[RMDB]
RNA sequence: GGGAACGACUCGAGUAGAGUCGAAAAUUUCAAGGAGGGGUGUCUUAGUCACUUCAGGCUGCUAUAACAAAAAUGCCAUAAACUGGGUACCUUAAACAACAAACACUUACUCCUCACAGUGCUGGAGAUACUUGACGUAAUUCGUUACGUCAAGUAUAAAAGAAACAACAACAACAAC
Reactivity to DMS in 0.01 (KOAc 150mM, MgCl2 10mM, bicine 150mM(pH8.5), 24C), signal-to-noise 6, nucleotides 027 to 126: u010u000u000c060a090a070g000g010a080g010g020g000g010u000g010u010c070u000u010a110g000u020c110a070c100u010u010c100a070g000g010c050u000g010c130u000a070u010a090a100c110a030a080a090a090a100u000g010c030c060a060u000a040a060a100c140u000g000g010g000u000a050c060c030u000u000a070a070a060c140a050a050c130a080a060a040c070a050c020u000u010a130c030u000c010c010u000c110a070c130a060g000u000g010c060u000g000g000a110g010
Reactivity to 2A3 in 0.01 (KOAc 150mM, MgCl2 10mM, bicine 150mM(pH8.5), 24C), signal-to-noise 3, nucleotides 027 to 126: u020u040u060c010a010a020g060g020a030g030g050g000g000u030g010u000c030u050u140a050g020u020c030a020c040u040u030c050a020g050g000c010u020g000c060u140a040u100a300a100c090a080a140a070a050a040u120g020c020c010a070u130a050a210a040c060u050g030g000g000u030a000c000c000u060u130a100a130a090c040a010a000c010a020a100a000c010a010c020u050u140a140c000u000c020c020u060c020a030c010a050g080u050g050c060u050g000g010a040g010